An RNA of 207 nucleotides, treated with DMS and 2A3 and read out base by base. The reactions ran in a buffer of 150 mM KOAc, 10 mM MgCl2 and 150 mM bicine (pH 8.5), at 24 C. For DMS, 1,888 sequencing reads were counted. Source: RMDB library OK3TST, as collected in RNAgym. Reactivities are rounded to 0.1 and cut off at 0 and 3.
[RMDB]
RNA sequence: GGGAACGACUCGAGUAGAGUCGAAAAAACUGAUUGGCGUGGUCGAGCAGUGGAACAGCGGAGCAGAGUUCGAUCUGCUCACUCGAUUGCAAGAGGUGGUAGAGGACUUCGAGAAGAACAUGGAUCGCAAGGUGCGCACUCCAUUCGUGGAGGAUGCACACUUCCAUGCAUUCGUGCAUGGAAGUGUAAAAGAAACAACAACAACAAC
Reactivity to DMS in 0.01 (KOAc 150mM, MgCl2 10mM, bicine 150mM(pH8.5), 24C), signal-to-noise 1, nucleotides 027 to 156: a070a110c050u020g010a130u000u020g000g040c010g050u000g010g000u000c010g000a120g020c070a080g020u000g020g000a060a060c090a080g010c010g000g010a080g020c000a010g020a070g000u000u020c140g000a170u000c020u010g040c000u010c000a060c060u000c020g020a200u000u000g000c040a090a130g010a100g070g010u000g060g010u000a070g020a060g000g000a100c050u000u010c020g000a080g000a030a090g010a040a040c070a100u010g010g000a060u010c040g080c030a010a110g000g060u000g020c000g150c040a150c000u000c000c000a060u000u000c260g020u000g020g000a070g000g000a150u000g030c030
Reactivity to 2A3 in 0.01 (KOAc 150mM, MgCl2 10mM, bicine 150mM(pH8.5), 24C), signal-to-noise 3, nucleotides 027 to 156: a000a000c120u130g000a110u120u050g040g010c000g000u010g010g000u060c040g030a020g020c010a040g030u080g030g040a110a070c080a090g010c050g110g000a000g000c000a000g010a050g080u150u190c050g040a200u000c030u000g000c000u030c030a010c010u000c010g110a100u010u200g030c040a030a030g010a020g030g000u010g020g010u030a030g000a030g030g060a030c000u020u010c050g050a050g010a100a070g020a000a030c020a070u090g030g030a060u050c060g040c060a030a020g020g000u030g040c020g000c050a050c010u000c010c000a010u080u060c130g050u030g000g010a000g010g000a030u080g000c030